[RMDB]
RNA sequence: GGGAACGACUCGAGUAGAGUCGAAAAGUGCAAUGACAACAAAUCACCACGAGACGUUUCAUUUAAAAAUUGGCACUGCUUUUGGGGAGGUAAGGGAUUGUCAAUUUGCAUUUAUUUUAAGGCCAGGCGGUGGGGAAUGCUUCGGCAUUCCCCACCGAAAAGAAACAACAACAACAAC
Reactivity to 2A3 in 0.01 (KOAc 150mM, MgCl2 10mM, bicine 150mM(pH8.5), 24C), signal-to-noise 2, nucleotides 027 to 126: g000u030g000c010a030a070u010g000a010c030a000a030c000a000a220a000u040c010a010c050c000a000c030g000a000g010a000c030g000u000u010u000c080a030u080u180u230a080a070a000a010a010u000u000g000g000c080a000c040u030g100c060u130u010u010u010g060g000g020g040a040g040g000u150a070a040g150g000g100a220u030u040g000u000c000a120a150u000u000u090g000c020a000u000u080u090a100u000u260u040u050a060a000g060g010c000c010a000g000g130
About this RNA
Chemical mapping of a 177-nucleotide RNA with 2A3.